RNA sequence: GGGAACGACUCGAGUAGAGUCGAAAAAGAGAUGUGCUGCCAGCAGAAGCAGGAAGAAGCAAAGAAGAGUGACUUCCUAGAACCUUCAGAGAAACCUUCAGCAUGGCCCUCCUGACACCUUAAUUUUGAUCUUCUGGACUCCAGAACUGUGGGAGGGGAUCUAGUGUUUGUUCGCAAACACUAGAUCAAAAGAAACAACAACAACAAC
Reactivity to 2A3 in 0.01 (KOAc 150mM, MgCl2 10mM, bicine 150mM(pH8.5), 24C), signal-to-noise 3, nucleotides 027 to 156: a000g090a010g000a040u090g030u030g030c030u050g000c060c020a020g010c040a020g050a070a000g000c040a000g060g020a040a010g020a020a010g040c080a050a080a070g160a040a010g100a050g060u060g050a050c000u010u000c020c000u020a050g050a050a070c000c010u030u060c030a030g030a000g050a160a090a060c000c030u090u090c030a030g000c020a030u030g050g020c000c000c000u020c000c010u040g040a010c020a060c040c020u140u140a110a190u170u150u090u160g090a090u040c040u050u000c020u040g140g000a220c050u040c090c020a010g010a060a050c080u090g010u080g030g010g000a020g000g000g010
Reactivity to DMS in 0.01 (KOAc 150mM, MgCl2 10mM, bicine 150mM(pH8.5), 24C), signal-to-noise 2, nucleotides 027 to 156: a040g010a080g010a070u000g030u000g030c020u020g020c070c000a170g040c040a160g020a040a090g010c070a060g000g020a060a050g000a100a210g000c080a060a070a120g010a120a130g020a130g030u020g000a220c020u000u000c010c030u000a110g000a110a100c050c030u010u000c030a090g010a150g030a120a090a090c050c020u000u000c020a140g020c050a070u000g020g040c000c000c000u000c010c000u010g000a070c070a030c070c030u000u010a020a200u010u000u030u000g000a110u000c020u000u000c060u030g000g020a150c070u000c050c010a040g000a030a020c100u010g050u010g000g000g000a060g010g020g020

Structure probing data (2A3 and DMS) for a 207-nucleotide construct. For 2A3, 2,131 sequencing reads were counted. 2A3 adducts were read by reverse transcription with SuperScript II with manganese. The RNA was probed in 150 mM KOAc, 10 mM MgCl2 and 150 mM bicine (pH 8.5) at 24 C. For DMS, 2,218 sequencing reads were counted.